[RMDB]
Conditions: 150 mM KOAc, 10 mM MgCl2 and 150 mM bicine (pH 8.5), 24 C. Chemical mapping of a 177-nucleotide RNA with 2A3. For 2A3, 463 sequencing reads were counted. Source: RMDB library RFM100, as collected in RNAgym.

RNA sequence: GGGAACGACUCGAGUAGAGUCGAAAAGUUUACUCCAAAUUCAUUGGCUAGUUGAGGCCAAGAAACACCUGAUUUUUUAAUGCUAAAUUUCUAGCUUAUCUUCAUAGCUUAAUUUCAUACAAAAAAAUCCUAUGUUGCAGUUCGCUGCAACAUAGGAAAAAGAAACAACAACAACAAC
Reactivity to 2A3 in 0.01 (KOAc 150mM, MgCl2 10mM, bicine 150mM(pH8.5), 24C), signal-to-noise 2, nucleotides 027 to 126: g030u100u100u190a150c000u000c000c010a060a130a120u060u190c110a070u090u100g000g000c040u020a060g090u140u120g020a000g020g020c000c000a000a000g000a000a040a000c160a020c000c030u060g120a150u000u000u040u000u150u110a080a060u030g040c010u060a010a030a030u080u060u070c040u000a020g000c000u000u070a080u150c130u160u000c030a030u170a050g020c000u000u060a020a080u080u080u090c040a020u010a270c200a020a020a000a020a020a020a020